An RNA of 207 nucleotides, treated with 2A3 and read out base by base. The RNA was probed in 150 mM KOAc, 10 mM MgCl2 and 150 mM bicine (pH 8.5) at 24 C. The 2A3 profile rests on 407 reads. The data come from the RNA Mapping Database (RMDB), library M2RFPK.
RNA sequence: GGGAACGACUCGAGUAGAGUCGAAAAACAGUUCCUACUUAUCCGGUUUUAACGCUGUUUUAUUGGCGCAGAGGUUUACGGAUAAACAACUAAUAAUUAAACCUUUUGUGUGCGAAACGUGGUUGUUAUAAUACCGAGCGUUUCGACGCUCGGUAAACUAAGACAAUACCUUCGGGUAUUGUCUUAGAAAAGAAACAACAACAACAAC
Reactivity to 2A3 in 0.01 (KOAc 150mM, MgCl2 10mM, bicine 150mM(pH8.5), 24C), signal-to-noise 1, nucleotides 027 to 156: a000c010a050g000u000u020c000c000u030a060c000u020u030a040u000c000c000g050g030u010u000u000u040a060a050c060g000c020u040g130u190u080u100u190a070u080u170g000g040c000g000c040a000g000a000g090g000u000u010u000a000c000g000g000a020u060a140a080a040c020a020a040c060u150a050a170u090a170a090u190u180a060a000a050c020c000u050u110u180u110g090u000g020u020g040c100g060a110a130a030c020g050u100g000g000u040u000g000u000u140a110u040a110a160u050a000c000c000g040a000g000c000g020u050u110u040c140g030a010c000g000c000u000c000g040g050u000a010a000a000